An RNA of 177 nucleotides, treated with 2A3 and DMS and read out base by base. Reactivities are given for positions 27 through 126. The RNA was probed in 150 mM KOAc, 10 mM MgCl2 and 150 mM bicine (pH 8.5) at 24 C. For DMS, 5,232 sequencing reads were counted. It was measured as part of the RMDB library M2PK50. 2A3 adducts were read by reverse transcription with SuperScript II with manganese.

RNA sequence: GGGAACGACUCGAGUAGAGUCGAAAAGCUGUCAGCUUCGGCUGACAGCAAACGCUCAUCUCAUGGAGCGCAAGACGAAUAGCUACAUAUUCGACAUGAGAAAAAGCUGCGCGUUCGCGCGCAGCAAGAUUAUGCAAUGGUUCGCCAUUGCAUAAUCAAAAGAAACAACAACAACAAC
Reactivity to 2A3 in 0.01 (KOAc 150mM, MgCl2 10mM, bicine 150mM(pH8.5), 24C), signal-to-noise 5, nucleotides 027 to 126: g000c010u010g010u000c000a010g010c020u050u090c170g110g000c000u000g000a000c000a000g000c000a000a000a000c000g000c000u000c000a070u000c010u000c010a000u010g000g000a000g000c030g010c200a120a030g140a040c020g000a010a010u020a020g060c130u270a110c090a230u040a030u000u010c000g010a010c010a010u000g000a000g000a060a010a010a000a010g000c000u010g000c000g000c010g030u030u080c250g000c000g000c000g000c080a000g000c000a000a000
Reactivity to DMS in 0.01 (KOAc 150mM, MgCl2 10mM, bicine 150mM(pH8.5), 24C), signal-to-noise 4, nucleotides 027 to 126: g000c000u010g010u000c000a000g010c010u000u020c240g020g020c000u000g010a010c010a000g010c000a010a050a160c010g000c000u010c010a120u000c000u000c000a000u000g000g000a000g000c000g020c100a070a080g010a080c000g000a020a010u000a010g010c210u010a140c140a130u000a010u000u000c000g010a090c000a000u000g000a000g000a020a180a100a130a110g000c000u000g000c000g010c010g020u000u000c220g020c010g000c010g020c000a000g010c000a010a020